[RMDB]
RNA sequence: GGGAACGACUCGAGUAGAGUCGAAAACGGUCGAAAUUCGUUUCGACCGAAUAUGGUAGCUGAGCACAGCUGCAAUGCUAAGCUGAAAGCCAGCUGCAAGCGCGAGUUCGGCGUUCGCGCCGAACAAGAACACCGGUGAAUUCGUUCACCGGUGUUCAAAAGAAACAACAACAACAAC
Reactivity to 2A3 in 0.01 (KOAc 150mM, MgCl2 10mM, bicine 150mM(pH8.5), 24C), signal-to-noise 1, nucleotides 027 to 126: c000g000g000u000c000g010a030a000a010u160u140c170g060u030u020u010c000g000a000c000c000g010a010a020u170a070u100g160g000u010a000g000c000u000g030a040g040c000a020c020a290g000c000u020g030c060a140a100u130g000c030u090a110a030g000c000u010g050a140a030a000g040c000c020a000g000c020u010g000c010a040a010g140c130g020c060g130a140g130u010u020c000g000g000c000g020u020u040c250g000c030g000c000c000g000a000a000c000a020a000
Reactivity to DMS in 0.01 (KOAc 150mM, MgCl2 10mM, bicine 150mM(pH8.5), 24C), signal-to-noise 1, nucleotides 027 to 126: c000g000g020u000c000g010a000a000a060u000u000c300g030u000u000u000c000g000a010c000c010g020a020a000u000a040u010g000g010u000a030g010c000u000g000a140g010c000a200c010a020g000c000u010g000c080a070a080u000g030c120u000a100a080g000c000u010g010a070a100a040g010c000c000a020g000c000u000g000c010a110a070g010c250g000c220g000a170g000u000u000c000g000g000c030g020u000u020c180g000c010g020c000c000g000a000a000c000a040a070